[RMDB]
RNA sequence: GGGAACGACUCGAGUAGAGUCGAAAACGCGAAGGUGGGCUCAGCCCGGUUGGCAACCGGGUGUCGAGUGCAUGGGCAUAAGCCCGCCUAACUGUGAGACCAACAAGUCGAGCAGAUGCGAAAGCAGACGAUAGGCUAAUUUCGAUUAGCCUAUCGUAAAAGAAACAACAACAACAAC
Reactivity to DMS in 0.01 (KOAc 150mM, MgCl2 10mM, bicine 150mM(pH8.5), 24C), signal-to-noise 9, nucleotides 027 to 126: c040g020c060g020a110a040g020g010u000g020g010g000c000u010c060a300g000c000c010c010g020g020u000u000g010g010c160a190a230c010c010g000g000g020u000g000u030c140g020a130g030u000g010c040a160u040g000g000g010c010a050u010a120a070g010c000c010c000g000c000c000u000a100a130c010u000g000u000g000a300g000a010c000c030a110a130c300a110a140g000u000c010g000a300g010c000a000g000a110u000g000c000g010a110a080a130g010c090a090g010
Reactivity to 2A3 in 0.01 (KOAc 150mM, MgCl2 10mM, bicine 150mM(pH8.5), 24C), signal-to-noise 7, nucleotides 027 to 126: c050g020c030g050a060a000g010g010u020g000g000g010c000u010c050a010g000c000c010c010g000g010u030u040g100g010c060a050a030c010c000g010g010g010u030g070u120c080g040a060g020u030g010c020a070u280g050g190g000c010a040u060a140a000g000c000c000c000g000c000c000u010a060a020c000u000g010u010g010a020g000a010c020c010a050a110c080a160a020g010u010c000g000a010g000c010a010g020a080u170g020c010g050a100a030a000g050c040a020g020

About this RNA: Chemical mapping of a 177-nucleotide RNA with DMS and 2A3. Reactivities are rounded to 0.1 and cut off at 0 and 3. It was measured as part of the RMDB libraries RFM100 and RFMREP. The RNA was probed in 150 mM KOAc, 10 mM MgCl2 and 150 mM bicine (pH 8.5) at 24 C.